[RMDB]
RNA sequence: GGGAACGACUCGAGUAGAGUCGAAAAUUACACCCGGCGGCAGACGCAGCAUCCGCGCGCAACCGCCACACCCGUUUCGGGGACCUCGGUACAGGCAGGCUGAGAACUCCCCUCUUUUAUGCCCGGCCACUCCGACACACUUCGGUGUGUCGGAGUGAAAAGAAACAACAACAACAAC
Reactivity to 2A3 in 0.01 (KOAc 150mM, MgCl2 10mM, bicine 150mM(pH8.5), 24C), signal-to-noise 2, nucleotides 027 to 126: u120u090a040c000a050c030c000c000g000g000c000g000g000c030a020g010a130c020g010c000a070g070c010a080u070c080c080g000c000g000c000g000c030a010a020c000c010g000c010c010a000c030a000c000c000c000g080u110u240u190c010g020g000g000g000a010c000c000u000c000g000g000u070a190c040a030g040g110c010a030g030g030c010u000g010a000g030a120a060c020u030c030c000c040c000u010c020u000u090u040u020a130u080g010c020c010c000g010g010c010